[RMDB]
RNA sequence: GGGAACGACUCGAGUAGAGUCGAAAACGAAGUAAUCUCUUAAAGAAUACUUCUGCAUCAUGAUUUGUAAUAUAAUGAACCAACUCAGAUUCCUUAAUGUUACACAAAUCAUUUUAGAUAUCUGACAAGCUAAUGACCAUUUCGAUGGUCAUUAGCUAAAAGAAACAACAACAACAAC
Reactivity to 2A3 in 0.01 (KOAc 150mM, MgCl2 10mM, bicine 150mM(pH8.5), 24C), signal-to-noise 3, nucleotides 027 to 126: c090g000a000a000g000u000a000a100u010c030u030c050u220u270a300a300a010g020a070a010u000a010c040u000u000c000u040g050c030a100u080c000a020u060g020a010u060u080u080g050u030a010a120u100a050u060a130a110u050g020a030a020c060c030a050a130c070u060c190a030g060a300u030u060c000c000u030u020a110a190u040g000u010u090a050c070a000c050a030a000a090u050c000a000u000u000u040u090a130g030a070u070a040u120c060u040g020a010c110a210
Reactivity to DMS in 0.01 (KOAc 150mM, MgCl2 10mM, bicine 150mM(pH8.5), 24C), signal-to-noise 2, nucleotides 027 to 126: c270g020a000a030g000u010a000a010u000c000u000c230u000u020a090a100a040g000a020a080u000a000c010u000u000c010u000g060c080a090u020c020a020u000g000a000u000u000u000g000u060a030a040u050a020u000a020a040u010g040a020a160c040c050a020a120c300u010c210a170g020a100u000u000c000c060u010u010a040a020u000g020u000u000a010c120a070c300a110a020a000u000c000a020u000u010u000u000a040g020a050u000a000u000c000u060g020a140c220a080
Chemical mapping of a 177-nucleotide RNA with 2A3 and DMS.
The data come from the RNA Mapping Database (RMDB), library OK1LIB.
Reactivities are given for positions 27 through 126.
The reactions ran in a buffer of 150 mM KOAc, 10 mM MgCl2 and 150 mM bicine (pH 8.5), at 24 C.
2A3 adducts were read by reverse transcription with SuperScript II with manganese.
High DMS reactivity at an A or C suggests that its Watson-Crick edge is free.